Annotation
Chemical mapping of a 177-nucleotide RNA with 2A3 and DMS. For 2A3, 15,565 sequencing reads were counted. High 2A3 reactivity points to a flexible backbone, as in loops and unpaired stretches. The RNA was probed in 150 mM KOAc, 10 mM MgCl2 and 150 mM bicine (pH 8.5) at 24 C.
[RMDB]
RNA sequence: GGGAACGACUCGAGUAGAGUCGAAAAGGCAGGACGAACACCGUUCCGUCGUCAUCGGGUGUACGGACUGGACCGGUUGGUGCCAGUACCGAUGUCGGGCCGUGCCAGGGCAGCCAGCCGCGUGAGGAUGACUAAUAUCGUUCGCGAUAUUAGUCAUAAAAGAAACAACAACAACAAC
Reactivity to 2A3 in 0.01 (KOAc 150mM, MgCl2 10mM, bicine 150mM(pH8.5), 24C), signal-to-noise 7, nucleotides 027 to 126: g030g010c040a030g020g020a020c020g020a180a050c070a040c110c020g030u100u030c020c030g040u040c010g030u020c020a050u050c030g050g000g030u130g060u110a080c050g040g060a010c010u040g000g010a010c000c010g160g020u200u300g070g000u130g240c000c010a020g010u040a180c020c010g010a020u040g030u050c000g000g040g000c030c020g010u010g000c000c020a040g020g030g000c000a000g040c010c010a010g020c010c010g040c050g040u070g040a100g100g050
Reactivity to DMS in 0.01 (KOAc 150mM, MgCl2 10mM, bicine 150mM(pH8.5), 24C), signal-to-noise 9, nucleotides 027 to 126: g010g020c020a110g010g010a070c040g010a110a090c100a100c100c040g010u000u000c030c030g010u000c050g010u010c030a040u000c030g010g010g010u000g010u000a120c100g010g000a060c010u000g000g010a050c020c010g020g020u010u010g020g020u010g010c000c010a030g000u000a070c020c010g010a050u000g010u000c030g010g000g020c050c030g010u000g020c030c040a110g000g000g010c050a080g000c040c030a080g000c020c030g010c100g020u000g000a100g000g000